[RMDB]
RNA sequence: GGGAACGACUCGAGUAGAGUCGAAAAGUUAGAUUAGACAGUAUGGGAAGUACACAUGCUGUUUAAUCCCACAAUAAAAACCCUGAGUACUUACAGGUACACUGAGGUGCAAAUCAGUGUUUUAGCCACCCCACUGCUAGUUCGCUAGCAGUGGGGUAAAAGAAACAACAACAACAAC
Reactivity to DMS in 0.01 (KOAc 150mM, MgCl2 10mM, bicine 150mM(pH8.5), 24C), signal-to-noise 1, nucleotides 027 to 126: g030u060u070a130g000a170u000u000a000g000a000c010a030g000u000a000u000g000g000g060a090a080g030u000a010c150a290c010a000u020g000c000u000g000u000u000u000a010a010u030c000c000c170a130c270a040a080u020a010a020a020a060a020c150c000c010u000g000a150g000u010a000c010u000u000a120c090a000g010g000u000a030c010a010c030u000g010a000g010g000u010g000c100a100a100a180u000c040a010g000u010g000u000u010u060u000a150g010c300c120
Reactivity to 2A3 in 0.01 (KOAc 150mM, MgCl2 10mM, bicine 150mM(pH8.5), 24C), signal-to-noise 3, nucleotides 027 to 126: g070u090u080a000g020a090u010u010a010g020a000c000a000g000u000a000u020g020g040g130a070a190g120u080a070c110a000c000a020u000g010c010u000g000u000u000u000a000a000u000c000c000c000a070c070a050a110u300a100a090a000a000a020c030c010c000u050g050a030g020u030a010c030u000u040a000c000a030g010g010u010a010c010a000c000u000g000a000g100g040u300g150c110a000a090a130u000c020a020g010u010g100u010u040u080u300a000g010c030c020